[RMDB]
RNA sequence: GGGAACGACUCGAGUAGAGUCGAAAACGAUGGUGCGGUGCUGACAAAUCGGGAACCGCUACAGGAUGCUUCCUGCCUGUGGUCAGAUCGAACGGAAGAUAAGGAUCGUGCAUUGGGUCGUUUCAGCCUCCGCUCGCUCACGAAAAUUCCAACUGAACAUUAUGAUUGAGUUCGCUCAAUCAUAAUGAAAAGAAACAACAACAACAAC
Reactivity to 2A3 in 0.01 (KOAc 150mM, MgCl2 10mM, bicine 150mM(pH8.5), 24C), signal-to-noise 9, nucleotides 027 to 156: c040g050a080u110g040g030u050g010c010g010g020u040g050c020u030g030a040c070a070a130a080u120c040g030g030g040a030a040c030c010g000c010u020a010c010a010g020g010a030u090g070c080u090u050c010c020u050g050c000c010u030g000u030g010g020u050c060a040g020a120u070c040g050a060a050c060g050g040a050a050g020a120u110a080a030g060g010a020u030c040g020u070g050c040a090u100u230g080g010g000u030c020g010u010u030u050c020a020g010c010c020u060c010c010g000c010u020c020g030c010u050c020a050c050g050a060a020a020a090u100u030c030c020a070a060c070u060g020a070a020
Reactivity to DMS in 0.01 (KOAc 150mM, MgCl2 10mM, bicine 150mM(pH8.5), 24C), signal-to-noise 5, nucleotides 027 to 156: c040g010a140u010g020g030u000g030c030g030g020u000g030c020u010g020a280c080a070a080a090u000c040g010g020g010a080a080c030c050g040c010u000a020c010a010g010g010a080u000g010c150u000u000c020c010u000g000c050c040u000g030u000g010g010u010c040a110g010a090u000c010g010a060a150c040g000g000a080a060g010a150u000a070a110g010g010a060u000c030g030u010g030c080a200u010u000g000g000g030u010c020g000u000u000u000c040a130g030c030c020u000c020c020g000c020u000c020g020c080u010c020a100c070g000a070a050a070a150u000u010c030c010a060a210c060u000g000a110a230
Chemical mapping of a 207-nucleotide RNA with 2A3 and DMS. The 2A3 profile rests on 15,549 reads. The data come from the RNA Mapping Database (RMDB), library ARCHII. For DMS the reverse transcriptase was MarathonRT. Reactivities are rounded to 0.1 and cut off at 0 and 3.